[RMDB]
RNA sequence: GGGAACGACUCGAGUAGAGUCGAAAAAUGGCAUGGGAAUUUGAAGAGAUAGUAGGUCUCUGGAAUAUGUUAAAAUGGGCAUGAGGUAGGCCUACAGAGUCCCUUAUGAAGUGGGCAUAUGACUCUUGCAGCUUGGCUACCAGCUCGGCGGUGACGAACUACGGAAUGAUUUCGAUCAUUCCGUAGUAAAAGAAACAACAACAACAAC
Reactivity to DMS in 0.01 (KOAc 150mM, MgCl2 10mM, bicine 150mM(pH8.5), 24C), signal-to-noise 2, nucleotides 027 to 156: a150u020g010g030c020a050u000g050g020g000a070a110u000u020u010g000a150a080g000a060g010a060u000a110g030u000a100g030g000u000c000u010c010u010g040g020a150a170u000a040u000g010u020u000a010a060a160a180u000g010g020g000c020a050u010g010a130g030g000u000a050g030g020c030c030u010a030c070a070g000a110g000u000c020c060c030u010u010a180u000g000a090a140g000u000g000g010g010c090a060u000a100u000g020a060c020u000c040u000u000g000c090a100g020c100u000u000g020g020c010u000a050c070c050a090g020c010u000c070g070g050c090g000g010u000g020a090c050g020a080
Reactivity to 2A3 in 0.01 (KOAc 150mM, MgCl2 10mM, bicine 150mM(pH8.5), 24C), signal-to-noise 2, nucleotides 027 to 156: a000u050g030g000c040a020u040g020g000g070a090a120u120u110u150g050a120a030g030a010g020a040u080a080g040u030a010g000g080u000c040u000c020u020g000g030a040a050u100a030u090g050u050u120a030a060a130a160u080g070g000g000c030a010u070g030a000g040g050u040a010g030g020c010c000u010a040c010a000g040a010g030u020c010c020c030u010u030a140u150g060a060a030g030u070g020g000g000c070a000u060a020u110g040a020c020u000c000u030u080g020c010a010g020c030u070u050g000g000c000u030a090c020c010a020g010c030u000c000g030g000c020g000g000u030g000a050c080g010a040